[RMDB]
RNA sequence: GGGAACGACUCGAGUAGAGUCGAAAACUGUGUUCGCACAGAAUAGCUCCUAAGUCAUUCUCUUGGACCAAUAGUAAGGCUCAACAGCUGUCGGAAACGACAGACAUGAGCCACUAUUGCUAGAGAAUGAUAUGGAUUAGAACUAGUUCGCUAGUAACAGCCCUAUAAUAUUCGUAUUAUAGGGCUGAAAAGAAACAACAACAACAAC
Reactivity to 2A3 in 0.01 (KOAc 150mM, MgCl2 10mM, bicine 150mM(pH8.5), 24C), signal-to-noise 5, nucleotides 027 to 156: c010u010g000u000g040u100u090c300g080c110a010c000a020g050a080a040u110a080g080c040u010c010c000u040a080a040g020u000c000a000u010u010c000u000c010u040u120g100g090a190c100c010a000a000u000a000g020u040a140a220g020g000c010u010c010a050a130c040a170g030c000u010g010u000c000g040g020a100a060a070c020g000a000c000a000g030a020c010a090u040g000a000g000c000c000a000c000u000a000u000u000g000c000u010a010g000a000g000a010a000u000g000a000u000a020u040g000g010a020u120u210a090g050a090a020c010u040a020g000u090u040c210g060c190u070a000g180u300a050a020
Reactivity to DMS in 0.01 (KOAc 150mM, MgCl2 10mM, bicine 150mM(pH8.5), 24C), signal-to-noise 3, nucleotides 027 to 156: c020u000g020u010g010u000u000c070g070c070a060c030a090g010a040a110u010a080g020c050u000c000c040u000a030a300g030u000c000a020u000u000c000u000c010u010u020g060g000a120c300c010a020a020u000a030g010u010a040a100g020g020c030u000c010a030a080c130a160g030c000u000g020u010c000g000g010a150a130a240c020g010a000c000a020g020a020c090a260u020g020a010g000c000c010a030c010u000a030u000u000g020c020u010a050g020a030g000a010a010u010g010a030u000a080u000g000g020a150u000u010a070g000a080a040c010u000a060g020u000u000c110g030c050u000a060g000u000a070a260
An RNA of 207 nucleotides, treated with 2A3 and DMS and read out base by base. Conditions: 150 mM KOAc, 10 mM MgCl2 and 150 mM bicine (pH 8.5), 24 C. For 2A3, 4,976 sequencing reads were counted. It was measured as part of the RMDB library RNAMAK. The DMS profile rests on 5,891 reads.